RNA sequence: GGGAACGACUCGAGUAGAGUCGAAAAGAUAUGGAACCGGAGCAACAGCUAUAGGUCGGAAACGACCUGAUAGACAUGCCACGGUUCCUAAGUCAAAGGUUAUCGAAAGUUCGCUUUCGAUAACCAACAGCAAGUGUGUCUUCGGACACACUUGCUGAAAAGAAACAACAACAACAAC
Reactivity to DMS in 0.01 (KOAc 150mM, MgCl2 10mM, bicine 150mM(pH8.5), 24C), signal-to-noise 1, nucleotides 027 to 126: g010a040u000a110u010g000g000a020a000c000c030g020g000a300g030c070a090a090c300a190g000c000u000a000u000a010g000g000u010c000g030g000a010a060a060c000g000a000c010c000u000g000a010u000a000g000a080c210a150u000g000c000c300a150c050g000g020u000u030c000c010u000a000a030g000u000c030a110a110a110g000g030u000u000a010u000c000g000a000a030a000g020u020u010c260g000c030u000u000u000c000g000a000u020a000a000c000c010a030a020